RNA sequence: GGGAACGACUCGAGUAGAGUCGAAAAUAAAAAUUAUUGGACCUAUCUCAAGACAUCGAGUGGAACGGAUAUGACGGUAGAUUCCAGGACCCCCUCUUCUCUGAAGGUCAUGUUGUUAUGGUCAACAUUCAGUGGGAAACGGUUAUCCAAGCAACCCGAUAUGUAGAACCUUCGGGUUCUACAUAUCAAAAGAAACAACAACAACAAC
Reactivity to 2A3 in 0.01 (KOAc 150mM, MgCl2 10mM, bicine 150mM(pH8.5), 24C), signal-to-noise 1, nucleotides 027 to 156: u100a040a040a040a020a040u130u140a110u070u060g000g000a000c000c000u020a040u100c060u020c020a030a050g090a100c040a040u120c170g000a080g030u090g040g060a080a020c060g010g010a070u020a050u200g070a050c060g000g000u020a010g060a220u090u050c070c020a100g070g060a140c010c000c050c010c010u050c040u010u010c000u010c040u090g010a020a000g000g030u050c010a000u070g020u040u000g040u000u050a080u190g010g000u060c010a020a010c010a050u060u120c000a020g090u070g050g040g000a000a060a000c010g000g010u070u050a000u030c010c000a010a020g010c000a010a010c000c000c000
Reactivity to DMS in 0.01 (KOAc 150mM, MgCl2 10mM, bicine 150mM(pH8.5), 24C), signal-to-noise 2, nucleotides 027 to 156: u040a040a050a090a110a100u000u000a120u030u000g010g020a060c020c020u000a080u000c030u000c030a060a160g040a160c060a090u000c040g020a140g030u000g020g080a080a100c040g010g000a090u000a070u000g010a100c080g010g000u000a050g000a150u010u000c060c040a070g020g000a200c020c000c020c010c000u000c040u000u000c050u020c020u010g020a060a080g030g030u000c030a110u000g010u000u000g020u000u000a090u010g020g000u000c020a050a040c020a080u010u000c060a140g010u010g020g000g010a100a060a050c060g010g040u010u010a120u020c050c030a050a170g010c040a060a180c010c000c110
This 207-nucleotide RNA was probed chemically with 2A3 and DMS. For DMS the reverse transcriptase was MarathonRT. Values cover nucleotides 27 to 156. The reactions ran in a buffer of 150 mM KOAc, 10 mM MgCl2 and 150 mM bicine (pH 8.5), at 24 C.